[RMDB]
RNA sequence: GGGAACGACUCGAGUAGAGUCGAAAAGAUAUGGAUCCGACAAGACAUGAAACAGGGUCGGAAACGACCCGAUUUCAACAGCUUGCCGGAUCCUAAGUCAAAACGAAGGCACCUUCGGGUGCCUUCGCAUUUGCGGUAAGUUCGCUUACCGCAAAUGAAAAGAAACAACAACAACAAC
Reactivity to DMS in 0.01 (KOAc 150mM, MgCl2 10mM, bicine 150mM(pH8.5), 24C), signal-to-noise 5, nucleotides 027 to 126: g010a010u000a050u010g010g000a010u000c000c010g010a000c010a010a020g020a040c160a160u020g000a010a010a020c300a300g000g000g020u000c000g010g010a000a010a040c000g010a010c000c000c000g010a110u000u000u000c010a100a080c220a130g000c010u000u000g000c010c010g020g000a010u010c000c000u000a000a030g010u010c010a090a070a120a260c020g010a020a000g010g000c000a000c000c000u000u020c250g020g030g020u000g010c000c000u000u000c000g000
Reactivity to 2A3 in 0.01 (KOAc 150mM, MgCl2 10mM, bicine 150mM(pH8.5), 24C), signal-to-noise 2, nucleotides 027 to 126: g010a000u000a000u040g010g000a000u030c000c000g000a000c010a000a010g020a020c160a300u300g000a000a020a020c040a140g000g000g020u020c010g000g010a030a000a000c010g020a010c070c020c000g010a020u000u010u010c010a100a060c040a110g040c000u000u000g000c030c000g020g000a000u000c000c010u000a000a000g000u000c010a000a020a090a100c000g000a000a010g010g000c020a030c010c060u150u250c300g130g010g000u000g000c000c000u000u000c000g020
Structure probing data (DMS and 2A3) for a 177-nucleotide construct. Reactivities are given for positions 27 through 126. For DMS, 5,903 sequencing reads were counted. 2A3 is a SHAPE reagent: it acylates the 2'-hydroxyl of flexible nucleotides of all four kinds. The 2A3 profile rests on 5,552 reads.